[RMDB]
RNA sequence: GGGAACGACUCGAGUAGAGUCGAAAAGCGAUGGGGGGAGAUGCUAGGAGUUGGGGGAGACCGAAGCGAGGAGGAAAGCAAAGAAAGCAACGGGGCUAGCCGUCAGGUGUUCCUCCCCCCGAGAGGGUAAGCUCAGCGUUCGCGCUGAGCAAAAGAAACAACAACAACAAC
Reactivity to DMS in 0.01 (KOAc 150mM, MgCl2 10mM, bicine 150mM(pH8.5), 24C), signal-to-noise 1, nucleotides 027 to 129: g080c070g010a060u050g030g020g000g000g050g000a030g000a080u050g010c100u040a020g020g050a100g050u000u080g000g110g010g000g050a050g030a110c000c000g040a090a030g190c240g000a060g060g000a010g000g040a000a000a000g050c210a070a080a160g030a000a000a000g030c070a110a060c290g010g010g000g030c060u010a100g020c040c030g010u030c070a070g000g010u040g020u000u000c000c000u000c020c040c010c010c000c000g040a040g000a050g010g040g010u040a060a040
Reactivity to 2A3 in 0.01 (KOAc 150mM, MgCl2 10mM, bicine 150mM(pH8.5), 24C), signal-to-noise 1, nucleotides 027 to 129: g120c020g050a040u110g000g000g000g000g000g040a000g000a000u080g030c000u030a010g090g030a100g050u080u140g030g000g000g010g000a030g000a000c000c000g060a040a000g040c010g030a040g050g000a020g000g000a000a000a080g040c080a000a000a140g050a070a120a000g070c000a000a050c010g020g000g000g000c000u050a130g010c050c000g010u010c000a000g030g060u050g000u120u030c000c000u010c000c000c000c000c000c000g070a070g000a000g000g040g050u040a100a000